[RMDB]
RNA sequence: GGGAACGACUCGAGUAGAGUCGAAAACAACUGUUAUCUUGCCACUGCAUUGUUAACACUCCAACAAAUAGAGUUGAAGUUUAAUCCACCUGCUCUACAAAGGGCUGGUGAAGCUGCUAACUGUUGUAGUUCACAUUAGGUUCGCCUAAUGUGAACUAAAAGAAACAACAACAACAAC
Reactivity to 2A3 in 0.01 (KOAc 150mM, MgCl2 10mM, bicine 150mM(pH8.5), 24C), signal-to-noise 1, nucleotides 027 to 126: c000a000a010c010u040g010u090u050a050u040c030u020u160g020c020c010a040c070u060g000c020a040u040u040g030u050u100a050a010c050a000c070u060c000c000a010a010c050a090a280a140u160a060g080a030g070u000u010g010a020a000g000u000u050u100a020a010u030c010c000a020c000c000u030g030c000u030c000u000a110c070a040a260a060g000g000g000c000u010g000g010u000g000a030a010g000c020u020g030c000u010a010a010c030u060g050u060u030g020u020
The record gives the reactivity of an RNA of 177 nucleotides to 2A3. 2A3 adducts were read by reverse transcription with SuperScript II with manganese. For 2A3, 1,079 sequencing reads were counted. The RNA was probed in 150 mM KOAc, 10 mM MgCl2 and 150 mM bicine (pH 8.5) at 24 C. It was measured as part of the RMDB library 15KREP.